[RMDB]
RNA sequence: GGGAACGACUCGAGUAGAGUCGAAAAGAUCCGGAUCCGAUACCAGAUCGAACUCGGCCCGCGCAUGCCGUCGACCAGCACAUCGGCGGGCCGCAGCAAAGCCGCGGCGCCGGGAUACCGGUCGCGCCCUACUCUCUAUUUUCGAAUAGAGAGUAGGAAAAGAAACAACAACAACAAC
Reactivity to DMS in 0.01 (KOAc 150mM, MgCl2 10mM, bicine 150mM(pH8.5), 24C), signal-to-noise 7, nucleotides 027 to 126: g000a060u010c010c020g010g010a090u010c100c060g010a100u010a110c100c090a090g010a040u000c020g010a100a110c020u000c010g000g000c010c010c010g030c020g010c060a160u010g010c010c000g000u010c020g000a020c060c030a080g000c050a090c190a240u000c140g000g010c010g010g000g010c010c020g010c040a020g000c040a050a120a140g030c130c020g020c020g010g010c140g020c010c000g010g010g010a100u010a050c040c000g020g010u000c040g000c160g010c160
Reactivity to 2A3 in 0.01 (KOAc 150mM, MgCl2 10mM, bicine 150mM(pH8.5), 24C), signal-to-noise 6, nucleotides 027 to 126: g030a040u050c020c010g020g020a050u070c070c060g040a040u080a230c050c040a070g020a130u020c010g010a050a040c010u010c020g010g010c010c000c010g000c000g000c020a030u100g070c010c010g040u120c010g020a030c030c030a060g060c050a080c020a140u070c040g060g000c000g000g030g020c010c020g000c000a010g000c010a020a220a040g060c110c020g000c010g040g000c130g000c020c010g000g020g000a040u090a080c020c000g000g020u030c010g010c010g010c030